[RMDB]
RNA sequence: GGGAACGACUCGAGUAGAGUCGAAAAGAAAGAAAAGGUGCCAUAAGCUUGGAUCUUUCCCAGCUAGUGUAGAUCGAGGCAAACACAAUUGUGCUACACUCGCAGAGCACAUAAUGGCACCAAAGAAGGUAUAUCACCUGUUCGCAGGUGAUAUACCAAAAGAAACAACAACAACAAC
Reactivity to 2A3 in 0.01 (KOAc 150mM, MgCl2 10mM, bicine 150mM(pH8.5), 24C), signal-to-noise 5, nucleotides 027 to 126: g020a020a040a000g150a040a100a010a040g000g000u000g000c010c000a020u060a030a070g010c030u020u030g070g020a060u080c090u050u060u010c010c000c000a010g010c030u040a030g000u020g010u050a020g030a130u200c130g050a080g120g000c030a070a110a000c070a000c030a110a230u100u120g000u050g020c000u040a040c020a010c030u020c010g000c060a030g020a010g060c040a000c010a040u220a080a000u040g000g000c000a000c000c000a000a010a000g050a060a020
Reactivity to DMS in 0.01 (KOAc 150mM, MgCl2 10mM, bicine 150mM(pH8.5), 24C), signal-to-noise 3, nucleotides 027 to 126: g010a110a070a090g030a140a080a100a080g000g020u010g000c000c000a020u010a090a110g030c010u000u010g020g010a020u000c040u000u010u000c000c000c020a090g010c070u000a120g010u030g000u040a040g020a100u000c040g010a020g000g000c060a100a110a090c120a050c110a250a160u020u010g000u000g010c000u000a040c100a120c070u000c090g030c120a120g010a050g000c000a030c030a040u020a050a030u000g020g000c000a030c030c020a000a030a050g010a120a080